The record gives the reactivity of an RNA of 207 nucleotides to DMS and 2A3. The DMS profile rests on 2,372 reads. Conditions: 150 mM KOAc, 10 mM MgCl2 and 150 mM bicine (pH 8.5), 24 C. It was measured as part of the RMDB library M2RFPK. DMS adducts were read by reverse transcription with MarathonRT.

[RMDB]
RNA sequence: GGGAACGACUCGAGUAGAGUCGAAAAGAUUCCUCGUUGUUGAGCGAGGUUUAAACAAAUGGACCACACAAACGUAGAGCCGACUACGGAUUUAUAAAUUAAGGCAUUAAGUGUGAUAAGGAGACAAAAAACGAUGUUGUGUUCGCACAACAUCGAAUCUUACCCUGUAGUUCGCUACAGGGUAAGAAAAAGAAACAACAACAACAAC
Reactivity to DMS in 0.01 (KOAc 150mM, MgCl2 10mM, bicine 150mM(pH8.5), 24C), signal-to-noise 2, nucleotides 027 to 156: g010a290u000u000c000c000u010c040g050u000u000g000u000u000g020a160g010c010g000a090g040g040u010u000u000a050a130a110c060a080a130a220u000g000g030a070c000c010a040c010a050c000a110a160a110c010g010u000a020g000a220g010c040c020g040a170c040u000a010c000g000g000a220u000u000u000a040u000a050a060a080u000u010a000a110g000g010c040a230u000u010a070a170g010u010g020u000g040a050u000a060a130g000g000a130g010a130c050a000a010a070a120a090a090c050g020a030u000g010u010u000g020u010g010u000u000c290g000c040a020c010a000a010c000a000u000c010g030a020a050
Reactivity to 2A3 in 0.01 (KOAc 150mM, MgCl2 10mM, bicine 150mM(pH8.5), 24C), signal-to-noise 2, nucleotides 027 to 156: g080a140u100u020c000c000u000c000g030u030u120g020u060u130g070a040g030c050g000a010g070g060u040u080u090a070a070a010c060a000a070a010u120g040g000a010c070c000a030c000a000c030a030a280a000c000g000u000a000g000a000g030c000c020g090a010c000u000a000c000g010g000a010u030u260u000a130u110a050a010a040u070u080a000a010g000g020c000a000u130u190a180a130g000u010g010u010g030a030u100a130a000g090g040a120g060a050c160a010a160a000a000a020a050c030g000a000u000g000u010u000g000u000g000u030u060c110g030c090a000c000a010a010c010a000u000c000g000a000a030